[RMDB]
RNA sequence: GGGAACGACUCGAGUAGAGUCGAAAAUCAAGAAGCGGUUGCUGAAAAACUGCGCGAACUGUUUGAGGAUUGUCCAGCUGAUGUGCGGCCUAUUGAUAUAGACGCAUUCGCUGAUGACGAGUGUUACAUUUACAACAUGGACUAUGAAAAAGUGCUGACCAUAUGAUGAGUUCGCUCAUCAUAUGGUAAAAGAAACAACAACAACAAC
Reactivity to 2A3 in 0.01 (KOAc 150mM, MgCl2 10mM, bicine 150mM(pH8.5), 24C), signal-to-noise 2, nucleotides 027 to 156: u120c000a000a020g080a090a030g010c020g040g060u090u060g020c070u130g090a060a030a000a020a080c050u080g010c030g010c010g090a060a030c020u080g040u100u110u100g080a050g070g010a040u050u060g010u000c000c000a020g000c040u200g010a070u120g020u000g020c020g020g020c000c050u020a040u020u160g200a130u100a010u010a290g010a000c000g000c010a010u030u020c030g000c010u060g010a140u120g010a030c030g020a020g000u100g030u030u060a070c060a100u100u090u090a150c130a110a010c010a010u040g000g050a010c030u100a080u220g120a050a060a010a030a040g060u090g110c070u060g030
Reactivity to DMS in 0.01 (KOAc 150mM, MgCl2 10mM, bicine 150mM(pH8.5), 24C), signal-to-noise 2, nucleotides 027 to 156: u010c030a080a150g000a110a170g080c040g000g010u000u010g010c050u000g010a100a090a070a080a110c060u000g010c010g030c010g000a110a090c000u000g000u020u000u000g000a080g020g010a140u010u010g000u010c030c010a070g020c030u010g030a080u000g070u000g000c000g020g040c060c010u000a160u000u010g030a160u000a160u000a030g020a030c030g080c000a000u010u000c000g000c000u000g010a170u010g010a050c050g000a040g060u000g000u000u000a050c080a070u010u000u010a120c060a010a040c020a080u000g040g020a090c060u020a130u020g010a130a070a040a130a100g000u010g000c030u000g000

Chemical mapping of a 207-nucleotide RNA with 2A3 and DMS. It was measured as part of the RMDB library OK3TST. The 2A3 profile rests on 1,564 reads. The DMS profile rests on 3,410 reads.